[RMDB]
RNA sequence: GGGAACGACUCGAGUAGAGUCGAAAAAAUGCCGCCUCAGUUCCAAGCUCUUUCGUGGCACUGUAAACAAUCCUAUUGAGUUAGGGGCAGUCAACCACGUUGCGAAGCUAAAUUAUCUGGUCGAGAGUUACGAUUCCCUACUUCGGUAGGGAAUCAAGAAAAUGUUACUAUUCGUAGUAACAUUUUCAAAAGAAACAACAACAACAAC
Reactivity to 2A3 in 0.01 (KOAc 150mM, MgCl2 10mM, bicine 150mM(pH8.5), 24C), signal-to-noise 1, nucleotides 027 to 156: a010a000u100g030c030c010g020c010c010u050c010a030g050u090u050c040c020a040a010g000c000u000c020u030u060u030c030g010u010g000g000c110a010c010u010g060u130a090a190a130c040a060a070u040c000c000u030a040u040u120g110a170g300u050u020a010g000g000g040g000c010a000g000u010c010a010a020c000c010a000c010g000u010u030g030c120g090a070a010g000c020u070a070a090a030u210u190a070u040c070u060g030g000u050c040g040a020g000a010g200u070u070a040c070g000a000u000u000c010c010c010u000a000c000u010u030c120g080g000u000a000g000g000g000a000a000u000c000a000a000
Reactivity to DMS in 0.01 (KOAc 150mM, MgCl2 10mM, bicine 150mM(pH8.5), 24C), signal-to-noise 3, nucleotides 027 to 156: a040a070u010g020c010c030g030c010c010u000c040a080g020u000u010c020c030a160a300g010c020u000c020u000u000u000c030g030u010g020g010c030a040c000u000g010u000a040a120a050c060a090a160u030c010c020u000a030u000u010g020a300g010u000u000a030g000g000g010g000c010a020g000u000c020a070a030c010c010a030c050g000u000u000g010c100g020a110a140g020c050u000a050a040a080u000u010a030u000c070u000g010g000u000c030g010a150g010a150g000u000u000a080c090g010a040u000u000c000c000c000u000a020c000u010u010c240g040g010u000a000g010g010g020a000a010u000c000a010a210
An RNA of 207 nucleotides, treated with 2A3 and DMS and read out base by base. For DMS, 6,313 sequencing reads were counted. It was measured as part of the RMDB library M2RFPK.